[RMDB]
This 177-nucleotide RNA was probed chemically with 2A3 and DMS. DMS adducts were read by reverse transcription with MarathonRT. The reactions ran in a buffer of 150 mM KOAc, 10 mM MgCl2 and 150 mM bicine (pH 8.5), at 24 C.
RNA sequence: GGGAACGACUCGAGUAGAGUCGAAAAAGCUGAACGCAUCUAAGCUCGAAACCCACCUGGAAACGAGGAACCACCGAGGCCACUCCUACAAGAGGAGAUCGAUAGACUCGGGGUGUACGCGCCAAGGUGUUAUAACAUUGUUCGCAAUGUUAUAACAAAAAGAAACAACAACAACAAC
Reactivity to 2A3 in 0.01 (KOAc 150mM, MgCl2 10mM, bicine 150mM(pH8.5), 24C), signal-to-noise 9, nucleotides 027 to 126: a000g020c030u040g020a150a030c080g020c090a030u050c040u100a030a010g000c000u010c040g080a100a070a080c010c000c000a010c010c000u010g010g030a060a080a040c030g020a060g030g030a020a010c010c030a160c040c010g010a010g020g000c030c010a030c010u000c000c000u100a150c080a170a060g050a030g260g010a010g000a040u160c090g070a090u040a180g080a050c000u000c000g000g000g000g000u000g000u070a000c010g010c000g000c010c000a050a050g020g000
Reactivity to DMS in 0.01 (KOAc 150mM, MgCl2 10mM, bicine 150mM(pH8.5), 24C), signal-to-noise 9, nucleotides 027 to 126: a030g020c010u000g000a130a120c150g010c100a050u020c040u000a180a050g010c010u010c050g010a090a100a140c010c010c000a090c030c000u000g000g010a050a060a110c040g000a100g010g000a250a030c020c010a110c010c010g010a020g000g010c050c060a100c000u000c000c000u000a140c300a120a150g000a020g000g000a020g000a050u010c120g010a140u030a090g010a090c000u000c000g010g000g000g010u000g000u030a120c020g010c050g010c020c010a060a060g000g010